This 177-nucleotide RNA was probed chemically with 2A3 and DMS. The 2A3 profile rests on 18,304 reads.
RNA sequence: GGGAACGACUCGAGUAGAGUCGAAAAGAUAUGGAAUCGCUCGAUAUGGAGGCUUUGAGUCGGAAACGACUCGAAGCCGAUGAAAUAUCGAGGCGAUUCCUAAGUCAAAAGUUCGCUUCGGCGAACACUAAAUAGUGUACUUCGGUACACUAUUUAGAAAAGAAACAACAACAACAAC
Reactivity to 2A3 in 0.01 (KOAc 150mM, MgCl2 10mM, bicine 150mM(pH8.5), 24C), signal-to-noise 3, nucleotides 027 to 126: g020a030u100a050u210g000g010a010a000u000c000g000c010u000c000g000a000u010a010u020g040g020a010g000g000c000u020u000u010g000a000g000u000c010g000g000a120a050a040c010g000a000c000u000c010g000a010a010g010c050c000g000a010u010g000a010a000a010u020a000u000c000g020a040g020g000c000g000a000u000u010c000c000u000a040a000g030u010c020a040a050a070a190g010u000u000c010g010c020u050u100c270g180g010c010g000a000a000c000a010
Reactivity to DMS in 0.01 (KOAc 150mM, MgCl2 10mM, bicine 150mM(pH8.5), 24C), signal-to-noise 7, nucleotides 027 to 126: g010a050u000a300u000g010g000a020a010u000c000g020c000u000c010g000a010u000a010u000g000g020a050g020g030c010u010u000u000g010a020g010u000c010g010g000a140a090a190c010g010a020c000u000c000g000a000a000g020c000c000g000a020u020g000a170a130a010u000a010u000c000g000a040g020g010c000g010a010u000u000c000c000u000a020a090g010u010c040a090a110a180a120g010u000u000c000g020c010u000u010c250g040g010c000g010a000a010c010a150
The RNA was probed in 150 mM KOAc, 10 mM MgCl2 and 150 mM bicine (pH 8.5) at 24 C.